[RMDB]
RNA sequence: GGGAACGACUCGAGUAGAGUCGAAAAAUAGAGUGUAUCAUGUCAGUAAGCAUGCCGGGGAAUGGUGGUUUACCCCGUUAUCAAAUGAUUACCGACCAAUAAUUGGCGAAACUCGUUUCGCGUUGGCAAAGUCACGGCGUGUUCGCACGCCGUGAAAACUAUGUCCUAGGUUCGCCUAGGACAUAGUAAAAGAAACAACAACAACAAC
Reactivity to 2A3 in 0.01 (KOAc 150mM, MgCl2 10mM, bicine 150mM(pH8.5), 24C), signal-to-noise 6, nucleotides 027 to 156: a000u160a030g080a020g040u120g020u070a070u100c030a020u050g070u050c040a050g130u150a140a000g020c020a020u030g040c030c010g000g000g000g010a020a030u050g010g010u010g020g030u020u040u090a070c010c000c000c010g030u030u040a030u030c030a000a010a050u070g020a030u070u040a010c000c020g040a090c040c050a010a020u160a140a070u150u130g080g000c010g010a010a020a020c080u080c140g090u000u010u020c020g000c010g000u010u010g020g010c070a130a070a040g050u040c000a000c000g000g000c010g000u020g010u030u050c150g020c080a000c000g000c010c000g000u000g000a000a000a000
Reactivity to DMS in 0.01 (KOAc 150mM, MgCl2 10mM, bicine 150mM(pH8.5), 24C), signal-to-noise 2, nucleotides 027 to 156: a040u000a100g010a080g050u000g000u020a090u000c030a110u000g020u010c000a040g000u000a050a050g000c010a050u000g020c170c080g000g000g010g030a050a090u010g010g040u010g030g010u000u000u000a260c000c000c010c010g030u000u000a070u010c300a060a060a030u000g010a070u000u000a030c010c010g000a060c040c060a030a140u000a090a140u000u000g030g010c000g000a070a040a040c040u010c130g000u000u010u000c030g020c120g000u000u030g000g000c040a030a040a170g020u000c010a020c020g010g000c000g060u000g030u000u000c300g030c020a020c000g010c000c000g000u000g000a010a010a040